[RMDB]
RNA sequence: GGGAACGACUCGAGUAGAGUCGAAAAAUUUGAGGAUCAGGUGUUGCGAGGUGAGGGAGAAGGCAAUGUCAACUAUGAAUCCUAGGUAUCUGUCAUGUGCCAUUUCUAGAAAAAGAGCAGGUUUGAGGCAAGAACACUGUUUCGACAGUGUUCUUGCAAAAGAAACAACAACAACAAC
Reactivity to DMS in 0.01 (KOAc 150mM, MgCl2 10mM, bicine 150mM(pH8.5), 24C), signal-to-noise 1, nucleotides 027 to 126: a050u000u000u040g060a100g000g000a080u000c070a140g030g000u010g030u040u000g000c090g000a070g010g000u000g010a100g000g030g000a070g000a030a090g000g000c000a000a030u000g050u000c090a090a050c230u050a060u000g020a050a040u050c050c020u000a110g000g090u030a050u020c020u000g020u010c020a020u020g000u000g000c020c000a080u040u000u000c020u000a020g000a030a000a080a100a020g000a110g010c110a010g010g000u000u000u010g000a090g020
Reactivity to 2A3 in 0.01 (KOAc 150mM, MgCl2 10mM, bicine 150mM(pH8.5), 24C), signal-to-noise 3, nucleotides 027 to 126: a000u080u040u180g070a060g010g000a010u060c090a060g060g000u030g010u030u060g040c040g030a030g100g000u070g050a070g000g020g000a010g030a040a010g070g000c030a010a010u040g000u070c040a030a010c060u030a060u190g040a060a030u040c020c010u010a050g020g010u070a050u100c040u040g130u070c030a070u100g030u030g100c000c000a020u040u080u030c050u040a050g110a050a080a020a050a010g070a000g010c060a040g030g080u040u040u130g110a110g050
The record gives the reactivity of an RNA of 177 nucleotides to DMS and 2A3. Source: RMDB library OK1LIB, as collected in RNAgym. For 2A3 the reverse transcriptase was SuperScript II with manganese. The DMS profile rests on 1,791 reads. Values cover nucleotides 27 to 126. Conditions: 150 mM KOAc, 10 mM MgCl2 and 150 mM bicine (pH 8.5), 24 C.